[RMDB]
RNA sequence: GGGAACGACUCGAGUAGAGUCGAAAAACGCGCUCAUAAAGGAGAUGAAAGGCGUGCUAGAUGACCAGGGUCUUGACGUUGACAUUCGUCACUUGAUACUAGUUGCCGAUAUCAUGACGCAGACUGGCACACCCCUGCUGUUCGCAGCAGGGGUGUGAAAAGAAACAACAACAACAAC
Reactivity to 2A3 in 0.01 (KOAc 150mM, MgCl2 10mM, bicine 150mM(pH8.5), 24C), signal-to-noise 1, nucleotides 027 to 126: a010c030g040c000g000c040u030c000a050u110a110a240a060g180g070a200g040a060u060g160a160a060a020g010g020c020g020u010g050c000u010a060g000a080u060g070a170c020c030a070g150g000g000u000c120u080u130g000a000c000g000u000u100g070a090c060a240u060u080c070g000u000c040a000c020u000u220g010a110u060a140c050u020a060g000u040u160g020c070c050g000a030u020a090u110c240a060u140g080a060c050g000c030a000g060a080c020u020g080g060
Reactivity to DMS in 0.01 (KOAc 150mM, MgCl2 10mM, bicine 150mM(pH8.5), 24C), signal-to-noise 1, nucleotides 027 to 126: a120c100g000c040g010c100u010c020a030u000a140a100a150g020g000a120g010a100u010g030a060a110a160g020g020c000g030u000g020c030u000a030g010a060u030g020a120c050c000a040g000g000g000u000c120u000u000g000a050c030g030u000u000g020a060c120a120u000u000c050g020u000c010a070c070u010u000g000a040u000a050c080u000a030g020u000u000g030c040c030g010a120u000a060u000c010a100u000g000a080c050g000c070a040g000a080c070u000g020g040
This 177-nucleotide RNA was probed chemically with 2A3 and DMS. For DMS, 968 sequencing reads were counted. For 2A3 the reverse transcriptase was SuperScript II with manganese.